Chemical mapping of a 177-nucleotide RNA with 2A3 and DMS. For DMS, 4,248 sequencing reads were counted.

[RMDB]
RNA sequence: GGGAACGACUCGAGUAGAGUCGAAAAGGUGAUGGCGCGGAUAUUGAUGCCCUUUUCGGCAAGCGCCUUGAAGGCGGUAGCCGCGACACCCGCAUGGCUGCGCAUGCCGAUGCCGAUAACGGAGAUACACCGUCAUAAUCUUCGGAUUAUGACGGUGAAAAGAAACAACAACAACAAC
Reactivity to 2A3 in 0.01 (KOAc 150mM, MgCl2 10mM, bicine 150mM(pH8.5), 24C), signal-to-noise 2, nucleotides 027 to 126: g030g000u140g040a230u130g090g050c000g000c020g020g030a010u010a010u100u210g120a100u180g010c030c030c010u030u060u030u060c000g000g000c000a080a160g120c030g000c130c000u000u030g050a020a000g000g020c040g020g000u020a010g000c010c000g000c010g010a020c010a060c020c010c040g020c030a050u080g000g000c020u030g060c080g000c070a030u110g000c040c000g050a040u100g010c000c020g000a020u060a150a030c040g060g000a020g010a010u120a090
Reactivity to DMS in 0.01 (KOAc 150mM, MgCl2 10mM, bicine 150mM(pH8.5), 24C), signal-to-noise 4, nucleotides 027 to 126: g000g000u020g020a080u000g000g010c010g010c020g010g000a070u000a070u000u000g010a180u010g000c110c010c060u000u000u000u000c160g010g020c010a070a170g010c160g000c000c010u000u010g040a060a120g020g030c020g010g020u000a060g040c000c030g010c020g010a080c070a050c070c030c050g000c050a070u010g000g010c050u000g000c080g010c110a080u010g010c000c050g000a090u010g000c010c030g020a120u010a060a090c060g010g000a120g010a150u020a180
For DMS the reverse transcriptase was MarathonRT. The data come from the RNA Mapping Database (RMDB), library OK2TST.